[RMDB]
The record gives the reactivity of an RNA of 177 nucleotides to DMS and 2A3. 2A3 adducts were read by reverse transcription with SuperScript II with manganese. DMS adducts were read by reverse transcription with MarathonRT. Reactivities are given for positions 27 through 126. The data come from the RNA Mapping Database (RMDB), library OK2TST. Conditions: 150 mM KOAc, 10 mM MgCl2 and 150 mM bicine (pH 8.5), 24 C.
RNA sequence: GGGAACGACUCGAGUAGAGUCGAAAAACGAAUGGAAUAAACUAGAAUAUCAAGGUGUUUUGGCCAUAUAUUUGAGAGACGUCUCGCAAAAUACAAAUCUUCUACCCGUCUCCCCACAAGAAGUAGAUCACCGUAUACUAUUCGUAGUAUACGGUGAAAAAGAAACAACAACAACAAC
Reactivity to DMS in 0.01 (KOAc 150mM, MgCl2 10mM, bicine 150mM(pH8.5), 24C), signal-to-noise 4, nucleotides 027 to 126: a070c080g010a090a030u000g010g020a100a080u000a070a060a110c060u000a080g020a090a040u020a060u000c100a100a080g020g010u000g010u000u000u000u010g010g000c020c080a060u000a100u010a080u010u000u010g010a090g010a090g020a160c170g010u000c020u010c050g010c080a030a020a060a080u010a040c100a050a090a090u000c050u000u000c010u010a070c070c030c020g000u000c050u000c030c000c000c070a090c210a040a090g010a060a090g030u010a090g010a150
Reactivity to 2A3 in 0.01 (KOAc 150mM, MgCl2 10mM, bicine 150mM(pH8.5), 24C), signal-to-noise 2, nucleotides 027 to 126: a000c050g080a030a010u090g020g020a090a140u130a140a120a040c030u040a050g050a130a100u040a030u160c030a090a100g090g000u030g020u050u040u030u080g050g000c030c050a020u070a010u010a040u160u110u120g050a070g010a020g020a040c040g060u030c000u000c030g050c040a090a000a060a020u120a050c030a020a190a090u030c020u060u000c000u040a040c020c000c000g070u000c020u040c000c000c010c000a050c010a040a050g120a040a020g060u100a020g030a050